RNA sequence: GGGAACGACUCGAGUAGAGUCGAAAAAAGCCGGAGGAAGGGGCGGGCGACGGUAGGUCAGUAUGCCCCGAAACCCCCGGGCUACACGCGCGCUACAAUGGGCGGGACAAUGGGACCCGACCCCGAAGUUACAUCUGUGAUUCGUCACAGAUGUAACAAAAGAAACAACAACAACAAC
Reactivity to 2A3 in 0.01 (KOAc 150mM, MgCl2 10mM, bicine 150mM(pH8.5), 24C), signal-to-noise 3, nucleotides 027 to 126: a000a000g120c040c000g010g020a080g010g020a050a040g000g000g010g010c020g020g020g030c030g010a020c000g020g300u290a110g180g050u030c020a010g020u040a050u100g010c010c000c000c000g010a000a010a010c000c000c010c000c000g040g020g010c000u040a010c040a010c040g040c000g000c010g010c030u070a030c080a120a150u130g000g010g040c000g000g000g010a020c060a070a290u170g060g010g070a050c020c000c010g070a290c040c000c010c030g070a130a020
Reactivity to DMS in 0.01 (KOAc 150mM, MgCl2 10mM, bicine 150mM(pH8.5), 24C), signal-to-noise 4, nucleotides 027 to 126: a070a080g040c010c000g010g000a080g000g000a120a150g010g010g000g000c040g000g020g010c120g010a020c030g000g020u040a040g030g010u010c000a060g020u020a100u020g020c000c000c000c000g000a040a070a100c040c010c010c010c000g010g000g010c050u000a060c140a090c060g000c010g000c020g010c050u030a100c170a100a090u010g020g000g000c010g000g000g020a130c070a200a060u040g010g020g000a120c020c010c030g000a120c020c000c000c120g000a090a110
Structure probing data (2A3 and DMS) for a 177-nucleotide construct. The reactions ran in a buffer of 150 mM KOAc, 10 mM MgCl2 and 150 mM bicine (pH 8.5), at 24 C. For DMS the reverse transcriptase was MarathonRT. Reactivities are given for positions 27 through 126.